[RMDB]
RNA sequence: GGGAACGACUCGAGUAGAGUCGAAAAUGGCUGGUUUGGCUUUUGGUUUAAAGUCUUUAUUUUCAUCUCUUUCGAACUUAGCCCAUGAAGAUGAAGAGGAAGAGAAAGUUGAAGAAGCGGAAGCUGACAGGUAAGAAGAGUUCGCUCUUCUUACCUGAAAAGAAACAACAACAACAAC
Reactivity to 2A3 in 0.01 (KOAc 150mM, MgCl2 10mM, bicine 150mM(pH8.5), 24C), signal-to-noise 2, nucleotides 027 to 126: u080g010g000c020u010g050g100u080u030u050g030g010c010u060u030u040u070g090g020u090u090u110a110a160a010g060u030c000u010u130u030a110u020u050u030u060c040a090u000c000u000c000u060u080u040c010g050a100a090c050u060u070a060g040c030c050c020a080u110g110a060a050g060a010u080g020a000a050g010a030g040g000a060a000g060a020g000a030a100a020g040u110u130g050a120a080g030a030a020g080c030g040g000a020a020g000c020u010g020a030
Reactivity to DMS in 0.01 (KOAc 150mM, MgCl2 10mM, bicine 150mM(pH8.5), 24C), signal-to-noise 5, nucleotides 027 to 126: u010g010g020c050u000g010g010u010u000u010g010g000c020u000u000u000u000g020g010u000u000u000a060a080a170g000u000c010u000u000u000a060u010u010u000u000c040a080u000c040u000c020u000u000u000c080g020a080a080c120u000u010a070g010c040c020c040a120u010g000a050a070g010a070u010g000a030a030g010a160g000g010a050a040g000a060g000a040a050a060g000u010u000g000a050a100g000a090a080g000c040g010g010a040a080g010c030u000g010a190

Source: RMDB library OK2TRN, as collected in RNAgym. This 177-nucleotide RNA was probed chemically with 2A3 and DMS. For DMS the reverse transcriptase was MarathonRT. For 2A3, 1,594 sequencing reads were counted. For DMS, 6,621 sequencing reads were counted. The reactions ran in a buffer of 150 mM KOAc, 10 mM MgCl2 and 150 mM bicine (pH 8.5), at 24 C.